[RMDB]
RNA sequence: GGGAACGACUCGAGUAGAGUCGAAAAGAUAUGGAUACAGGGAGCCUCCUGAUCGGAAACGAUCAGGAGGCGAGGAUCUGUGAUCCUAAGUCAAAGUACUCUUGCAUGUUCGCAUGCAAGAGUACAAGAAUGAUUGUGAGUUCGCUCACAAUCAUUCAAAAGAAACAACAACAACAAC
Reactivity to DMS in 0.01 (KOAc 150mM, MgCl2 10mM, bicine 150mM(pH8.5), 24C), signal-to-noise 3, nucleotides 027 to 126: g000a030u010a300u010g000g000a020u010a020c000a010g000g000g020a040g010c000c000u010c000c000u010g000a010u010c000g010g000a100a100a160c010g020a010u000c010a000g010g020a000g000g000c000g000a010g010g010a020u010c000u000g010u000g020a010u000c000c000u000a070a150g010u010c030a070a100a140g010u000a020c000u000c000u000u000g010c000a010u000g000u010u020c280g040c000a000u000g000c000a000a000g000a010g010u010a000c000a070a060
Reactivity to 2A3 in 0.01 (KOAc 150mM, MgCl2 10mM, bicine 150mM(pH8.5), 24C), signal-to-noise 1, nucleotides 027 to 126: g020a000u060a000u120g010g000a010u000a020c000a000g020g000g020a000g040c020c000u000c000c000u010g020a020u030c010g020g010a100a070a030c010g000a010u000c020a060g020g000a000g040g000c010g000a020g010g010a000u010c000u020g050u090g090a020u000c000c000u020a140a030g030u030c050a120a020a070g000u010a000c000u010c000u000u000g000c000a000u000g030u030u110c300g030c170a000u000g010c000a000a000g010a000g000u000a000c000a010a000